[RMDB]
RNA sequence: GGGAACGACUCGAGUAGAGUCGAAAAGGUUAUUACCGGUCACUACCACACCAUACGGUAAUAACCACCGAGAGGGAUGAUUAGGUGUGGCUACCAGUGCUAGCGUCAUUACCACCCCCUAGCUAGCACUGGAAGCGAAAGCGAUUAGAGGGGUGGAAUUAGCGUAUUUAUUCGUAAAUACGCUAAUAAAAGAAACAACAACAACAAC
Reactivity to DMS in 0.01 (KOAc 150mM, MgCl2 10mM, bicine 150mM(pH8.5), 24C), signal-to-noise 2, nucleotides 027 to 156: g030g000u000u010a020u000u000a010c030c000g000g000u010c050a040c090u000a090c010c030a040c010a030c010c010a110u000a110c010g010g000u010a020a030u010a020a000c020c000a080c100c020g000a230g040a170g010g000g010a140u000g010a120u000u010a120g020g050u020g010u000g010g000c030u000a150c000c020a080g010u000g000c040u000a000g000c020g020u000c050a040u000u010a160c040c010a040c030c000c010c010c000u010a300g000c010u020a020g000c000a030c000u000g000g010a030a070g010c000g020a090a110a190g030c050g020a140u000u000a030g000a150g030g080g030g020u000g000g010a140
Reactivity to 2A3 in 0.01 (KOAc 150mM, MgCl2 10mM, bicine 150mM(pH8.5), 24C), signal-to-noise 5, nucleotides 027 to 156: g000g010u000u000a000u000u000a000c000c000g020g020u160c080a040c150u130a070c010c000a000c000a010c000c010a030u050a130c010g000g000u000a000a010u000a010a000c010c000a010c000c070g050a120g000a070g080g140g020a110u150g020a080u200u300a060g020g000u010g000u000g010g010c010u080a050c000c000a000g000u000g000c000u000a000g010c000g070u080c080a130u060u170a150c000c000a010c000c000c000c000c000u010a010g000c000u000a000g000c000a000c000u000g000g000a010a000g000c030g060a090a010a000g090c040g050a040u040u100a020g020a090g010g000g000g000u010g010g000a000